[RMDB]
RNA sequence: GGGAACGACUCGAGUAGAGUCGAAAAAGAUUGGAGAGGGCAACUGGGUCAAGGGCCUGCGGGACCUCGACGAAUCGCAGUUGCAGGCUGCCCUCAGCGCUGCCGUCGCCGAGCAGAACGUUGCCCGAGUCCAGGUCAGUUUCGACUGACCUGGACUAAAAGAAACAACAACAACAAC
Reactivity to DMS in 0.01 (KOAc 150mM, MgCl2 10mM, bicine 150mM(pH8.5), 24C), signal-to-noise 1, nucleotides 027 to 126: a040g010a160u000u000g000g040a210g000a160g000g010g040c010a030a030c020u000g000g000g000u000c050a050a060g020g000g010c010c000u000g010c180g050g010g010a090c040c010u010c050g010a030c060g010a060a080u000c170g010c050a090g000u000u010g020c100a090g000g000c050u000g030c030c070c080u000c040a050g000c080g000c010u000g010c010c040g010u000c140g000c060c060g000a090g030c130a050g000a110a150c120g000u000u000g020c040c000c020g000